[RMDB]
RNA sequence: GGGAACGACUCGAGUAGAGUCGAAAAGCCGCUGAGCACGCUGCGCUCGCUGCACAAGCGGUGGCGAGCAUGCCCCCUGCUGCAACAGAGCAUGCUUCAUUGUGCAGACAAGCUUUGACAGACAUAAACAUCGUCAUCGAUUCGUCGAUGACGAUGUAAAAGAAACAACAACAACAAC
Reactivity to 2A3 in 0.01 (KOAc 150mM, MgCl2 10mM, bicine 150mM(pH8.5), 24C), signal-to-noise 2, nucleotides 027 to 126: g030c020c000g000c120u110g020a010g000c030a030c070g050c030u070g000c020g000c030u040c050g000c020u020g000c000a070c020a140a050g030c120g130g000u010g020g020c060g010a000g040c020a010u080g010c040c030c010c020c010u040g010c040u140g040c010a050a050c000a040g010a010g000c010a000u030g000c000u030u030c000a050u070u050g030u040g000c000a010g030a100c030a010a050g020c050u100u060u050g040a090c070a020g060a000c020a080u230a080a160
Reactivity to DMS in 0.01 (KOAc 150mM, MgCl2 10mM, bicine 150mM(pH8.5), 24C), signal-to-noise 3, nucleotides 027 to 126: g040c020c040g010c090u010g010a100g000c020a050c140g040c050u000g010c050g020c000u000c030g010c000u020g010c050a040c050a090a050g010c110g010g020u000g000g050c070g000a050g010c020a000u000g000c000c000c070c060c020u000g030c050u000g020c140a170a110c070a060g000a060g020c000a020u010g010c020u000u010c100a170u000u000g010u000g010c040a030g000a110c130a060a070g000c040u000u000u000g010a150c090a080g010a090c130a060u000a120a100